[RMDB]
RNA sequence: GGGAACGACUCGAGUAGAGUCGAAAAACUGUCUUCUCCUUUAUAAAUGGCAGAAGAGUGACAAAAUUCAUUCAGACCGCACAUGUUAGAGGCAGGGAAUGAAGAAGGUACUGUGGGCCAUGGCCACUGUAGUGCUGUGGUUCGCCACAGCACUACAAAAAGAAACAACAACAACAAC
Reactivity to 2A3 in 0.01 (KOAc 150mM, MgCl2 10mM, bicine 150mM(pH8.5), 24C), signal-to-noise 2, nucleotides 027 to 126: a000c030u050g110u040c000u060u020c020u030c020c000u000u190u000a180u070a100a210a000u160g000g000c000a000g030a030a000g000a000g050u140g000a000c160a020a120a040a040u050u070c070a020u030u000c030a030g060a150c040c020g140c010a060c030a030u110g070u220u140a120g000a030g050g000c080a030g080g000g000a020a020u090g000a000a030g000a090a040g050g030u000a070c040u050g000u030g090g000g000c090c010a160u160g110g000c040c020a090c140
Reactivity to DMS in 0.01 (KOAc 150mM, MgCl2 10mM, bicine 150mM(pH8.5), 24C), signal-to-noise 2, nucleotides 027 to 126: a100c110u020g020u000c010u000u000c030u000c030c050u000u000u030a070u040a040a100a030u000g100g000c030a060g050a170a120g030a060g010u010g000a060c240a090a080a130a100u040u020c000a090u000u000c020a140g000a300c150c000g000c020a070c070a050u000g000u000u060a070g020a070g010g030c060a040g010g000g000a000a060u070g000a050a000g000a050a060g000g010u000a070c040u000g010u000g000g000g000c090c010a070u030g000g020c000c000a090c120